[RMDB]
RNA sequence: GGGAACGACUCGAGUAGAGUCGAAAAGAUAUGGACUUGCUGGUCGAAGAACUCACAGAACGCGAAGGACUUCUCGGAAACGAGAAGUCCUUCUAAGCUGUGAGGGAGACCAGUCAAGUCCUAAGUCGUGAUAUGAGAUGUUCGCAUCUCAUAUCACAAAAGAAACAACAACAACAAC
Reactivity to DMS in 0.01 (KOAc 150mM, MgCl2 10mM, bicine 150mM(pH8.5), 24C), signal-to-noise 1, nucleotides 027 to 126: g000a050u000a180u020g000g000a010c000u010u000g000c030u000g000g010u000c000g030a110a280g000a190a240c000u000c000a010c000a000g010a060a120c180g000c300g000a000a010g010g000a040c000u000u010c000u010c000g000g010a050a060a170c020g020a020g020a030a000g030u000c010c000u000u000c000u000a050a130g000c000u000g020u030g010a010g010g010g010a050g000a000c010c000a030g020u020c020a010a000g000u000c010c000u000a000a080g000u000c070
This 177-nucleotide RNA was probed chemically with DMS. Source: RMDB library TTRINS, as collected in RNAgym. The RNA was probed in 150 mM KOAc, 10 mM MgCl2 and 150 mM bicine (pH 8.5) at 24 C.